[RMDB]
RNA sequence: GGGAACGACUCGAGUAGAGUCGAAAAGUGCACGCAGAUGACGAUACAAUUGGAGCGUAUUUCGGAGAAGCAUACACCAAACGCGGCAAGGUUAAAGGAAGCACCCAAACCAAAGGCAUGGGGAUGAUCAGGUGUAAAUUUUCGAAUUUACACCUGAAAAAGAAACAACAACAACAAC
Reactivity to DMS in 0.01 (KOAc 150mM, MgCl2 10mM, bicine 150mM(pH8.5), 24C), signal-to-noise 8, nucleotides 027 to 126: g020u010g010c030a050c070g020c040a070g010a120u000g010a080c060g010a070u000a060c090a110a150u000u010g020g010a080g020c090g010u000a080u000u000u000c070g030g010a100g000a100a100g020c090a060u000a070c060a080c040c050a030a060a100c120g010c040g010g010c050a050a060g010g010u000u000a030a070a110g010g000a040a070g000c080a070c040c010c050a050a080a080c080c060a050a070a090g010g010c030a040u000g010g000g000g000a130u010g010a140
Reactivity to 2A3 in 0.01 (KOAc 150mM, MgCl2 10mM, bicine 150mM(pH8.5), 24C), signal-to-noise 6, nucleotides 027 to 126: g050u040g010c030a020c070g020c020a010g010a180u080g030a060c050g030a030u040a130c060a060a170u100u130g060g000a070g050c030g020u050a120u030u100u080c070g060g010a070g020a130a010g030c020a040u040a080c040a020c020c030a040a060a050c080g000c030g030g020c020a030a050g020g020u060u090a080a030a010g030g020a020a020g000c010a050c000c010c010a060a030a020c030c010a080a020a000g020g000c020a020u070g010g010g010g020a020u080g020a030